RNA sequence: GGGAACGACUCGAGUAGAGUCGAAAAAGAUUGACGAAGGAAAGCGGGUUAUUGAUGUGGAACUCGAUAGAAACGAAAAUGGCUCACUUGGAGUUCAAAUCGCAUCCCUGAGUGGCCGAGUAUGCAACUGGAUAAAAUGCUUCGGCAUUUUAUCCAGAAAAGAAACAACAACAACAAC
Reactivity to DMS in 0.01 (KOAc 150mM, MgCl2 10mM, bicine 150mM(pH8.5), 24C), signal-to-noise 1, nucleotides 027 to 126: a080g000a120u000u000g040a120c080g000a110a110g020g010a110a020a120g010c070g010g010g020u010u000a020u000u010g010a110u020g010u000g010g000a080a050c050u000c070g010a140u020a070g000a130a130a060c080g010a080a040a070a160u000g010g010c020u020c020a010c050u000u000g000g010a160g000u000u000c080a030a050a090u010c090g010c130a040u000c020c020c000u000g000a100g010u000g010g020c020c000g000a080g020u010a080u010g020c110a100a070